Chemical mapping of a 177-nucleotide RNA with DMS and 2A3. 2A3 adducts were read by reverse transcription with SuperScript II with manganese. The reactions ran in a buffer of 150 mM KOAc, 10 mM MgCl2 and 150 mM bicine (pH 8.5), at 24 C.

RNA sequence: GGGAACGACUCGAGUAGAGUCGAAAAUCAAGCAGAUAGAGAUGCGGGCGAGCGACGAUCCUUCGAAGAAACUGGGGAGCGCUCCCGCGGCAAUAACCACUACCGAAGGGCCGGUCUCGUUCACCUAGAUUCAAGCUAAGUUCGCUUAGCUUGAAUCAAAAGAAACAACAACAACAAC
Reactivity to DMS in 0.01 (KOAc 150mM, MgCl2 10mM, bicine 150mM(pH8.5), 24C), signal-to-noise 3, nucleotides 027 to 126: u020c060a150a100g000c020a050g000a140u010a100g010a110g000a110u000g000c070g010g000g000c070g000a020g010c080g010a070c070g010a050u000c010c010u000u010c040g030a120a120g000a070a070a080c230u000g010g020g010g000a220g010c140g010c040u000c050c120c090g030c050g020g000c040a050a090u020a120a130c040c040a070c020u010a090c100c010g000a020a060g010g000g020c070c010g010g000u000c050u000c010g000u000u010c020a110c030c040u000a120
Reactivity to 2A3 in 0.01 (KOAc 150mM, MgCl2 10mM, bicine 150mM(pH8.5), 24C), signal-to-noise 2, nucleotides 027 to 126: u070c030a030a010g080c020a010g060a210u300a060g110a050g020a070u100g040c020g010g000g000c020g010a010g010c040g130a130c020g030a050u010c010c000u030u040c030g140a160a100g070a090a150a000c050u070g000g000g000g020a040g050c060g030c020u040c010c020c020g010c000g040g010c000a030a040u050a030a040c010c010a040c060u040a030c010c040g000a030a000g000g000g040c010c010g050g040u010c010u010c030g000u020u020c020a050c060c000u040a040